[RMDB]
RNA sequence: GGGAACGACUCGAGUAGAGUCGAAAAGUGAAUGAUCUUGUUGGUGAGGGUGUCCGCCAGCCAGCGCAGGGUGUCUUCGGCGCUUUUGCCGCGGCGCAGCUCCCGCAGCGCCCGUUGCAGAGCCGCGAUACCUAAGGCAAUUCGUUGCCUUAGGUAUAAAAGAAACAACAACAACAAC
Reactivity to 2A3 in 0.01 (KOAc 150mM, MgCl2 10mM, bicine 150mM(pH8.5), 24C), signal-to-noise 2, nucleotides 027 to 126: g160u110g080a180a150u110g040a070u020c020u090u070g060u040u070g010g000u060g050a090g000g030g020u050g060u050c040c010g010c000c020a010g030c030c000a030g030c000g010c060a010g050g040g030u040g000u030c010u090u050c060g070g010c010g000c100u050u050u150u110g020c010c030g000c020g050g000c060g030c010a040g040c020u100c060c040c050g050c050a020g000c030g010c070c020c020g040u030u030g000c030a020g010a000g040c020c060g000c020g010
Reactivity to DMS in 0.01 (KOAc 150mM, MgCl2 10mM, bicine 150mM(pH8.5), 24C), signal-to-noise 5, nucleotides 027 to 126: g020u010g010a090a080u010g010a070u000c050u000u000g010u010u010g010g000u000g000a120g000g010g010u000g000u000c050c040g010c030c050a130g010c020c070a060g000c080g010c070a070g010g010g010u000g000u000c060u000u010c080g020g000c050g010c070u000u000u010u000g020c010c040g020c060g000g010c050g030c020a030g010c060u000c070c060c070g010c090a040g010c020g010c060c030c040g020u000u000g010c030a080g000a070g010c070c050g010c120g010